Source information: The record gives the reactivity of an RNA of 177 nucleotides to DMS and 2A3. Source: RMDB library OK1LIB, as collected in RNAgym. For DMS, 3,208 sequencing reads were counted. DMS (dimethyl sulfate) methylates the pairing face of unpaired adenines and cytosines. For DMS the reverse transcriptase was MarathonRT. 2A3 adducts were read by reverse transcription with SuperScript II with manganese. The reactions ran in a buffer of 150 mM KOAc, 10 mM MgCl2 and 150 mM bicine (pH 8.5), at 24 C.
RNA sequence: GGGAACGACUCGAGUAGAGUCGAAAACUCGGUAAAUGCCGCCGGGUCGUCGACGCACGCCGUCCAGACCGCCGCGGGGAAGAACGCGGGCUCGUCGGGGUCGACCAGCUCGGCCAGCCGGGCGCCGAGCUUCCUGUUUCUUCGGAAACAGGAAGCUAAAAGAAACAACAACAACAAC
Reactivity to DMS in 0.01 (KOAc 150mM, MgCl2 10mM, bicine 150mM(pH8.5), 24C), signal-to-noise 3, nucleotides 027 to 126: c030u000c010g010g020u010a030a080a070u010g010c050c140g000c010c050g000g000g020u000c300g050u000c050g030a010c020g010c130a140c230g010c040c010g010u000c020c100a010g000a100c070c090g020c000c030g050c020g010g000g050g010a180a060g020a050a090c020g000c010g000g000g000c080u010c110g000u020c000g040g010g010g010u020c010g010a020c060c180a200g010c040u000c000g010g000c000c080a130g010c090c070g000g000g010c050g010c050c020g020
Reactivity to 2A3 in 0.01 (KOAc 150mM, MgCl2 10mM, bicine 150mM(pH8.5), 24C), signal-to-noise 4, nucleotides 027 to 126: c000u000c000g000g010u170a200a170a080u180g050c120c040g000c010c000g050g000g000u030c010g010u010c010g010a010c030g040c120a070c130g120c030c000g010u030c010c010a020g020a150c010c070g080c020c020g000c050g020g010g040g100a100a110g060a130a000c010g010c000g010g020g030c020u010c010g010u000c000g040g000g040g010u010c000g000a010c000c020a030g020c020u010c000g000g010c020c010a030g010c000c000g010g000g010c020g020c010c010g000